[RMDB]
RNA sequence: GGGAACGACUCGAGUAGAGUCGAAAAAAGCUUUGCCGGCUCGCCCCAGUAAUCCGGGUUGCGCUCAAGCUCCACGCGGUCGCCCUGCACCCAGCGCUUGAACUUGAACGGGCCGGUGCCGACCGGAAAAUAGCCAUGGAUUCGUCCAUGGCUAUUUAAAAGAAACAACAACAACAAC
Reactivity to DMS in 0.01 (KOAc 150mM, MgCl2 10mM, bicine 150mM(pH8.5), 24C), signal-to-noise 1, nucleotides 027 to 126: a090a080g000c020u000u010u000g020c020c030g000g000c030u010c070g020c120c010c020c040a200g030u010a090a070u000c110c080g000g000g020u010u000g030c100g010c070u000c090a030a070g020c010u000c030c090a060c090g000c050g000g000u000c050g000c070c060c060u010g020c050a070c040c020c060a110g000c100g000c040u000u000g000a060a060c110u010u020g000a080a160c050g010g000g000c020c020g000g000u000g010c060c040g000a070c030c030g010g010a160
An RNA of 177 nucleotides, treated with DMS and read out base by base.
Source: RMDB library OK2TST, as collected in RNAgym.
For DMS, 2,128 sequencing reads were counted.
Reactivities are rounded to 0.1 and cut off at 0 and 3.